[RMDB]
RNA sequence: GGGAACGACUCGAGUAGAGUCGAAAAGUCUCCCGAUUCGUCGGGAGACCGAGAAAUUCAGGUGUUUUGCUACCUUUAAGUGCAGCUAGAAAUUCAAAGGAAACACCAUGGCGUUCGCGCCAUGGAACGUUUAUCUUGUAUUCGUACAAGAUAAACGAAAAGAAACAACAACAACAAC
Reactivity to 2A3 in 0.01 (KOAc 150mM, MgCl2 10mM, bicine 150mM(pH8.5), 24C), signal-to-noise 7, nucleotides 027 to 126: g000u000c000u000c000c010c000g000a020u030u050c150g030u000c010g040g010g000a020g010a000c000c000g010a030g110a040a170a030u220u140c070a020g020g010u010g050u050u110u150u060g010c010u020a020c010c000u120u200u270a030a010g010u020g010c020a010g010c030u100a050g160a110a180a080u210u150c090a120a080a060g130g010a090a100a020c060a020c020c010a000u000g000g000c010g020u030u050c230g000c000g000c030c000a000u010g000g010a010a000
Reactivity to DMS in 0.01 (KOAc 150mM, MgCl2 10mM, bicine 150mM(pH8.5), 24C), signal-to-noise 7, nucleotides 027 to 126: g020u000c000u000c000c000c000g010a010u000u010c170g030u000c000g010g010g000a010g020a010c000c020g000a090g000a300a070a090u010u010c090a030g000g010u000g000u010u010u010u000g000c010u000a030c010c010u000u000u010a020a020g000u010g010c010a020g020c300u010a080g000a050a070a090u010u010c080a050a080a100g010g010a080a050a070c150a130c000c000a000u000g000g010c000g030u000u010c230g020c000g010c010c000a010u010g010g000a030a050